[RMDB]
Chemical mapping of a 177-nucleotide RNA with 2A3.
The RNA was probed in 150 mM KOAc, 10 mM MgCl2 and 150 mM bicine (pH 8.5) at 24 C.
2A3 adducts were read by reverse transcription with SuperScript II with manganese.
RNA sequence: GGGAACGACUCGAGUAGAGUCGAAAACAAUACAGCGGAUGGUUGAAAUGCCAUAUACGCCAAUGAAUACCGCAACAAUGGUGAUGGGGCAAAGUGUCCCCAUUCGUUGAGUGCGGAGCUUGCGCCGCUGCCGCUCAGACUUCGGUCUGAGCGGCAGAAAAGAAACAACAACAACAAC
Reactivity to 2A3 in 0.01 (KOAc 150mM, MgCl2 10mM, bicine 150mM(pH8.5), 24C), signal-to-noise 2, nucleotides 027 to 126: c030a000a110u140a210c050a000g030c020g000g000a000u000g010g010u000u000g000a000a000a000u030g000c000c000a000u020a020u020a070c000g100c140c040a000a000u020g000a000a000u000a000c000c000g000c000a000a000c020a000a000u070g130g010u160g070a000u020g020g000g050g000c100a100a300a300g100u160g120u300c000c000c000c000a000u000u010c000g000u000u000g000a010g000u000g000c000g000g010a000g000c000u000u020g020c000g090c000c000g020